[RMDB]
RNA sequence: GGGAACGACUCGAGUAGAGUCGAAAAGAGGUCCGGGUAAACCGCUGAACCGCUUUCAUGCUUGGGAUUGUGAACUGAAACUGUUCACAUGAACCUGCAUUGAUUACGUCCCUGCCCCUGUACACACAUCACACGCAAGUUUCGACUUGCGUGUGAUAAAAGAAACAACAACAACAAC
Reactivity to 2A3 in 0.01 (KOAc 150mM, MgCl2 10mM, bicine 150mM(pH8.5), 24C), signal-to-noise 4, nucleotides 027 to 126: g080a010g010g030u040c030c000g030g000g090u220a180a110a070c010c000g020c110u070g030a050a010c020c000g000c020u000u010u040c010a000u010g000c010u050u060g010g000g010a020u020u000g000u000g020a000a000c000u020g040a130a030a090c140u160g000u000u000c000a000c000a010u000g010a020a100c000c020u010g000c000a020u000u140g020a010u100u070a050c060g050u030c000c000c000u020g000c000c000c000c000u030g020u110a030c030a000c000a000c000
Reactivity to DMS in 0.01 (KOAc 150mM, MgCl2 10mM, bicine 150mM(pH8.5), 24C), signal-to-noise 2, nucleotides 027 to 126: g000a040g040g010u000c040c010g010g000g000u020a050a050a140c000c000g000c170u050g030a180a040c010c020g000c020u010u000u000c050a050u000g000c050u040u000g000g000g000a060u000u000g020u000g010a050a000c000u000g000a090a110a100c300u010g000u000u010c000a030c000a010u010g010a300a170c000c020u000g000c020a010u000u020g040a070u040u010a090c220g010u010c000c020c000u000g000c010c000c000c000u000g010u010a050c090a020c100a040c120